[RMDB]
RNA sequence: GGGAACGACUCGAGUAGAGUCGAAAACGAGUACAGCGAUCGUACCGACAUGAGUCAUGUGACUACAGUACGAUCACAUCGAUCUCCAUGCUGAUCAGGUACCUAGCGACAUGCGUACAUGGUACGCACCUGGCCAAGUCUUCGGACUUGGCCAGGUAAAAGAAACAACAACAACAAC
Reactivity to 2A3 in 0.01 (KOAc 150mM, MgCl2 10mM, bicine 150mM(pH8.5), 24C), signal-to-noise 2, nucleotides 027 to 126: c040g000a030g060u130a060c060a070g000c020g020a040u030c000g000u020a000c010c020g080a050c040a170u190g030a000g020u050c010a110u280g120u250g120a030c050u110a100c080a050g060u110a030c060g020a060u020c000a000c030a010u020c050g030a040u030c000u040c050c020a050u100g000c000u090g040a120u050c040a040g020g050u050a100c000c020u070a010g040c040g100a060c040a070u110g000c000g000u000a000c010a280u240g120g000u000a010c000g010c000
Reactivity to DMS in 0.01 (KOAc 150mM, MgCl2 10mM, bicine 150mM(pH8.5), 24C), signal-to-noise 2, nucleotides 027 to 126: c040g010a130g040u010a080c150a130g010c030g020a040u000c120g030u000a000c040c060g010a090c160a080u000g000a090g000u000c000a020u020g010u000g030a040c020u000a140c300a130g010u000a030c110g000a050u000c010a010c010a080u000c120g020a080u000c000u020c030c160a060u030g020c140u000g010a130u000c080a080g000g000u000a010c030c060u000a090g000c040g040a050c120a200u000g010c030g000u000a010c000a280u000g010g010u000a030c010g020c000